Chemical mapping of a 177-nucleotide RNA with DMS and 2A3. For DMS the reverse transcriptase was MarathonRT. For 2A3, 10,827 sequencing reads were counted. It was measured as part of the RMDB library TTRDES. The RNA was probed in 150 mM KOAc, 10 mM MgCl2 and 150 mM bicine (pH 8.5) at 24 C.
RNA sequence: GGGAACGACUCGAGUAGAGUCGAAAAGAUAUGGAGUUUGACAGGACAUGCUUGCGAUCGGAAACGAUCGUCAAGCAACAGCCUGCGAACUCCUAAGUCAAACUCGGAUAACUUCGGUUAUCCGAGAGACAUAAAAUACCUUCGGGUAUUUUAUGUCAAAAGAAACAACAACAACAAC
Reactivity to DMS in 0.01 (KOAc 150mM, MgCl2 10mM, bicine 150mM(pH8.5), 24C), signal-to-noise 3, nucleotides 027 to 126: g000a020u000a070u000g000g010a030g000u000u000u000g010a170c010a010g000g000a050c110a090u020g010c000u000u010g010c010g000a000u000c000g020g000a020a010a040c000g020a000u010c000g010u000c030a020a000g010c010a040a020c140a200g010c000c000u000g010c000g000a010a010c000u000c000c000u000a000a050g000u000c000a140a160a290c010u000c000g010g000a020u000a000a010c000u000u010c260g020g000u000u000a000u010c000c000g010a000g000a060
Reactivity to 2A3 in 0.01 (KOAc 150mM, MgCl2 10mM, bicine 150mM(pH8.5), 24C), signal-to-noise 3, nucleotides 027 to 126: g000a010u020a000u040g000g000a000g010u000u020u000g130a170c000a010g000g040a050c120a290u180g000c000u010u010g000c010g000a010u000c000g010g010a030a010a010c010g000a000u000c000g030u170c040a000a000g040c010a010a010c010a010g040c000c000u000g000c000g000a010a000c000u000c000c000u020a020a000g000u010c030a050a040a140c000u000c010g000g010a000u000a010a010c000u070u120c300g140g010u000u000a000u000c000c010g000a000g000a000